[RMDB]
Notes
An RNA of 177 nucleotides, treated with 2A3 and read out base by base. Reactivities are given for positions 27 through 126. For 2A3, 1,178 sequencing reads were counted. Conditions: 150 mM KOAc, 10 mM MgCl2 and 150 mM bicine (pH 8.5), 24 C.
RNA sequence: GGGAACGACUCGAGUAGAGUCGAAAACAUUCAAUGCAAUAAGCUCAUCCUUAAUGUCUGAAAGUGCCAAUUGCCUUUGAACCUCUCUUUCAACAAUCUCAGGCAUAAGGUCCAAGUCCUGAACACCCCCUGCAGGGCUAUUCGUAGCCCUGCAGGGAAAAGAAACAACAACAACAAC
Reactivity to 2A3 in 0.01 (KOAc 150mM, MgCl2 10mM, bicine 150mM(pH8.5), 24C), signal-to-noise 3, nucleotides 027 to 126: c060a020u250u300c050a080a130u090g030c010a040a030u080a300a000g000c000u050c040a060u030c010c010u070u060a190a100u060g010u020c010u020g010a130a110a070g130u150g030c040c000a080a130u030u150g030c020c000u060u060u140g040a050a040c010c000u050c060u000c010u060u080u040c080a080a090c020a020a160u060c050u030c150a000g040g000c000a000u020a140a050g040g000u000c000c000a010a010g050u060c010c030u030g060a020a030c060a120c000c000